The record gives the reactivity of an RNA of 177 nucleotides to 2A3 and DMS.

[RMDB]
RNA sequence: GGGAACGACUCGAGUAGAGUCGAAAAAUGUGGUCAGGGUCGAGGUCACCGACCUCCACGAUCUCUUCCACCUCGGCCACCGUGACUUUGCCGCAAGUUGCGGCCAGCGGAUUGAAGUUCCGGGCGGACAUGCGUAUCACUUCGGUGAUACGCAUGUAAAAGAAACAACAACAACAAC
Reactivity to 2A3 in 0.01 (KOAc 150mM, MgCl2 10mM, bicine 150mM(pH8.5), 24C), signal-to-noise 2, nucleotides 027 to 126: a000u080g010u020g020g020u060c090a120g100g020g000u040c080g040a070g040g070u080c020a050c200c040g030a030c010c000u040c010c010a050c030g030a060u020c030u000c000u080u010c000c010a030c040c030u090c080g010g000c020c000a020c000c010g040u010g030a040c000u110u180u160g020c020c000g010c050a130a240g140u230u100g070c030g010g000c020c010a030g000c010g050g050a110u040u170g090a150a040g030u070u000c010c000g060g030g010c050g020g000
Reactivity to DMS in 0.01 (KOAc 150mM, MgCl2 10mM, bicine 150mM(pH8.5), 24C), signal-to-noise 3, nucleotides 027 to 126: a110u010g000u000g000g020u030c110a180g010g000g010u000c060g000a090g010g020u010c100a100c110c060g000a100c030c000u000c030c060a080c070g000a050u000c030u000c040u010u000c020c050a080c100c040u000c060g010g000c030c020a070c020c050g000u000g020a070c050u000u000u010g000c010c010g020c060a110a150g010u020u000g030c040g010g000c030c060a050g000c000g000g010a110u010u000g010a110a080g010u000u000c040c000g010g010g010c030g030g000

For DMS the reverse transcriptase was MarathonRT. It was measured as part of the RMDB library OK2TST. Values cover nucleotides 27 to 126. For 2A3, 1,659 sequencing reads were counted.